[RMDB]
RNA sequence: GGGAACGACUCGAGUAGAGUCGAAAAGAAGUCCGACGAGAUCGCGGCUGGGGCUUAGGACCCCACUCCUGCGAGACAGGAGUAAUCCUAAACAGGGUUUUCACCCUUCCUUUAGUUUCCUUCCUCUCUAUAUACUUGACUUCGGUCAAGUAUAUAGAAAAGAAACAACAACAACAAC
Reactivity to 2A3 in 0.01 (KOAc 150mM, MgCl2 10mM, bicine 150mM(pH8.5), 24C), signal-to-noise 3, nucleotides 027 to 126: g050a030a010g020u000c020c010g010a100c030g080a140g050a250u170c040g000c040g040g000c020u010g010g000g000g000c030u040u030a040g040g050a120c000c000c000c000a000c000u000c000c000u010g020c060g220a170g040a100c010a000g000g000a010g010u020a000a040u010c010c010u010a010a000a020c170a040g020g020g040u060u090u250u290c120a070c010c000c000u030u060c010c010u070u100u130a040g020u030u040u030c020c000u030u040c010c010u070c010u000
Reactivity to DMS in 0.01 (KOAc 150mM, MgCl2 10mM, bicine 150mM(pH8.5), 24C), signal-to-noise 2, nucleotides 027 to 126: g010a160a060g010u000c000c000g030a100c050g040a240g010a150u000c070g010c090g010g000c100u000g000g010g010g000c070u000u000a040g000g010a100c000c010c000c010a030c030u000c000c000u000g020c040g010a120g030a190c030a040g000g000a020g000u000a060a070u000c010c010u000a010a030a110c190a040g000g010g010u010u020u000u000c170a130c000c020c000u000u010c030c010u000u000u000a120g000u000u000u000c020c030u000u000c030c020u000c120u000
Notes: This 177-nucleotide RNA was probed chemically with 2A3 and DMS. For 2A3 the reverse transcriptase was SuperScript II with manganese. The reactions ran in a buffer of 150 mM KOAc, 10 mM MgCl2 and 150 mM bicine (pH 8.5), at 24 C. For DMS, 1,889 sequencing reads were counted. DMS adducts were read by reverse transcription with MarathonRT. It was measured as part of the RMDB library VIROID.